[RMDB]
RNA sequence: GGGAACGACUCGAGUAGAGUCGAAAAAGAGAGGAUCGUGCCGUACCGGGUUACUUGAUACAGCAUUAAAUCCAAGGUAACUCGCCUUGCCUCAGCCUGCCGGUUGACGGUUGCAAGGUCAAAUCAAAUAACCAGGCUAAGUAUGUAGAACUGUCUGCAAGGACUUAUUGUUCGCAAUAAGUCCUUGAAAAGAAACAACAACAACAAC
Reactivity to DMS in 0.01 (KOAc 150mM, MgCl2 10mM, bicine 150mM(pH8.5), 24C), signal-to-noise 2, nucleotides 027 to 156: a050g000a080g000a090g010g000a050u010c050g040u010g010c020c000g020u000a010c000c020g010g000g000u000u000a000c010u000u010g010a060u000a080c010a070g030c050a060u010u000a070a080a110u000c050c040a070a070g020g000u000a050a060c050u000c070g020c010c000u000u010g010c000c040u000c040a060g000c020c010u010g020c050c060g000g000u010u000g010a060c030g010g020u010u000g020c010a050a030g000g000u010c070a100a080a090u020c110a010a040a110u010a040a030c000c000a080g020g000c010u000a100a120g000u010a050u010g020u010a050g010a070a100c070u000g030u010c020u010g020
Reactivity to 2A3 in 0.01 (KOAc 150mM, MgCl2 10mM, bicine 150mM(pH8.5), 24C), signal-to-noise 3, nucleotides 027 to 156: a000g130a000g010a020g050g020a050u060c030g030u070g020c030c050g030u050a040c030c040g000g000g030u040u050a040c020u020u060g030a030u090a100c110a040g070c010a100u080u180a110a190a040u080c060c040a030a030g040g020u020a040a050c010u010c060g000c000c000u010u030g000c000c010u040c010a010g000c000c000u170g060c060c100g050g010u000u030g020a020c080g020g010u080u080g030c010a020a020g060g000u030c020a030a040a080u060c020a030a050a030u050a000a030c050c010a010g000g000c030u030a040a050g040u060a120u200g060u070a010g030a130a060c040u040g020u030c000u030g010